[RMDB]
RNA sequence: GGGAACGACUCGAGUAGAGUCGAAAAGAAUCAACAACGAUAGAUUGUAUAAAGAAAAUGUGGUACAGAUAGACCAUGGAAUACUGUGCAGCCAUAAAAUGGAAUCAGAUCAUGUCCUUUGCAGGGACAUGGAUGGAGCUGGAAGCCAUUAUCCUCACUAAUUUACUGAGUUCGCUCAGUAAAUUAGAAAAGAAACAACAACAACAAC
Reactivity to DMS in 0.01 (KOAc 150mM, MgCl2 10mM, bicine 150mM(pH8.5), 24C), signal-to-noise 3, nucleotides 027 to 156: g000a130a110u010c030a100a110c040a060a090c050g020a150u010a100g010a090u010u000g030u010a140u000a080a090a120g010a090a070a080a090u000g020u010g020g030u000a110c030a090g010a140u000a070g000a070c000c050a070u000g000g010a080a080u000a050c030u010g020u000g000c030a100g010c040c020a080u000a030a040a070a130u010g000g010a100a090u010c060a060g010a120u000c000a020u000g010u000c000c010u000u000u000g000c220a250g000g020g010a000c000a010u000g000g000a050u000g010g000a120g020c040u000g020g010a090a100g020c020c040a060u000u010a070u000c010c000u000c070a300
Reactivity to 2A3 in 0.01 (KOAc 150mM, MgCl2 10mM, bicine 150mM(pH8.5), 24C), signal-to-noise 5, nucleotides 027 to 156: g040a000a070u090c020a020a080c010a020a040c070g050a060u100a110g050a070u070u100g040u090a160u110a140a120a040g090a030a100a030a060u100g020u020g020g020u050a050c030a040g060a040u080a030g150a020c020c010a020u030g050g040a080a030u060a140c020u020g020u040g050c030a040g030c010c020a050u140a100a100a020a020u080g030g010a020a070u070c010a020g010a070u040c000a000u000g000u000c000c000u110u090u170g090c170a080g010g000g000a000c000a000u000g000g020a020u040g010g000a020g020c020u020g020g020a030a020g030c010c000a030u040u050a040u070c010c000u030c000a030